[RMDB]
RNA sequence: GGGAACGACUCGAGUAGAGUCGAAAACUGCGUCAGACUGCCACCAGCCGCCGUCGUCGUCACAGCGAGCGUCGGGCACGCCACGUCGCUCCACCACAGCGUGCCGCUCACCGACGCCGUCGGGGUCAUGGCCAGGAUUAUUCGUAAUCCUGGCCAUAAAAGAAACAACAACAACAAC
Reactivity to DMS in 0.01 (KOAc 150mM, MgCl2 10mM, bicine 150mM(pH8.5), 24C), signal-to-noise 2, nucleotides 027 to 126: c010u010g000c020g090u000c060a040g000a050c030u020g010c050c020a100c020c070a040g010c030c000g010c000c060g040u010c000g000u020c010g000u000c090a070c250a150g010c060g000a140g000c020g000u000c060g030g010g010c000a000c030g040c000c060a120c220g000u010c040g000c010u040c000c050a070c040c000a140c210a070g040c040g000u000g000c020c040g000c150u000c110a070c290c030g010a000c000g000c030c030g000u000c000g000g000g040g050u010c100
Reactivity to 2A3 in 0.01 (KOAc 150mM, MgCl2 10mM, bicine 150mM(pH8.5), 24C), signal-to-noise 3, nucleotides 027 to 126: c010u030g010c010g060u070c020a020g030a080c020u080g060c020c000a050c010c040a020g050c010c020g010c010c000g030u040c020g030u020c010g000u020c000a020c050a070g060c070g070a040g000c020g060u070c040g050g010g000c040a000c030g000c000c020a150c120g070u040c040g010c040u020c010c020a100c000c030a030c020a020g000c010g000u000g000c000c020g000c010u030c020a030c030c050g020a030c000g000c010c000g040u030c030g000g010g010g010u060c050

An RNA of 177 nucleotides, treated with DMS and 2A3 and read out base by base. The reactions ran in a buffer of 150 mM KOAc, 10 mM MgCl2 and 150 mM bicine (pH 8.5), at 24 C.